[RMDB]
RNA sequence: GGGAACGACUCGAGUAGAGUCGAAAAUGAUGGGGACCGUGCAGUGGUUACAUAUGAGGGGGAUUCUAGUGCUGGAUAUAAUCAUGAUGUCUCCAUUCUGCGGGCGUGGAUCCGCACCACCAAGGUCGCUAGUAAUGCUUUUCGAAGCAUUACUAGCAAAAGAAACAACAACAACAAC
Reactivity to DMS in 0.01 (KOAc 150mM, MgCl2 10mM, bicine 150mM(pH8.5), 24C), signal-to-noise 3, nucleotides 027 to 126: u010g010a060u000g000g000g020g000a030c030c100g020u010g000c140a070g010u000g000g010u000u000a050c090a050u010a050u010g010a120g010g020g020g010g020a120u000u000c080u000a090g020u010g010c090u000g010g010a060u010a070u000a070a050u010c030a040u000g000a100u000g000u000c010u000c020c010a060u000u000c100u000g020c040g000g010g030c110g050u010g010g000a100u000c030c020g020c020a050c070c030a090c070c060a090a110g000g010u000c140
Reactivity to 2A3 in 0.01 (KOAc 150mM, MgCl2 10mM, bicine 150mM(pH8.5), 24C), signal-to-noise 2, nucleotides 027 to 126: u160g020a030u040g000g010g020g010a000c020c040g040u060g040c050a020g030u030g030g060u070u120a030c040a060u220a110u210g090a120g000g050g010g000g000a000u100u000c020u050a040g070u040g170c040u000g000g010a040u040a010u020a160a070u070c040a030u090g060a040u100g080u000c020u000c000c000a010u070u030c030u060g020c020g000g000g050c060g080u170g110g000a070u010c000c010g000c020a010c000c030a030c010c000a080a010g060g030u090c080